[RMDB]
RNA sequence: GGGAACGACUCGAGUAGAGUCGAAAACAGAGCCCGUUCAUGGGUGAUGGCGUGCCUUUUGUAGAAUGAACCGGCGAGUUACGGUCCCAUGCAAGGUUAAGCUGAAAAAGCGGAGCCGCAGCGAAAGCAAAUAGGGCUUUUUCGAAAGCCCUAUUUGAAAAGAAACAACAACAACAAC
Reactivity to 2A3 in 0.01 (KOAc 150mM, MgCl2 10mM, bicine 150mM(pH8.5), 24C), signal-to-noise 3, nucleotides 027 to 126: c030a010g090a030g090c010c000c030g020u110u090c070a120u170g050g030g060u110g050a120u120g120g050c080g080u070g000c030c000u080u090u110u130g170u080a110g040a250a070u080g010a030a040c030c010g040g000c030g020a040g010u010u080a050c070g010g080u010c020c000c000a020u090g000c020a040a040g000g000u040u080a020a010g010c010u040g130a150a080a120a060a070g000c000g010g000a010g010c020c050g000c090a000g020c020g030a100a040a000g070
Reactivity to DMS in 0.01 (KOAc 150mM, MgCl2 10mM, bicine 150mM(pH8.5), 24C), signal-to-noise 8, nucleotides 027 to 126: c040a090g020a300g010c010c010c110g010u010u000c080a050u010g010g010g010u000g010a110u000g020g010c070g030u010g000c020c010u000u000u010u010g020u010a090g000a140a070u000g010a080a040c040c180g010g000c010g000a130g010u010u000a080c110g010g000u000c010c010c020a120u010g010c040a070a130g020g010u000u000a100a300g000c010u010g010a050a060a060a090a040g020c010g000g030a300g010c000c010g010c170a210g000c020g010a090a070a130g020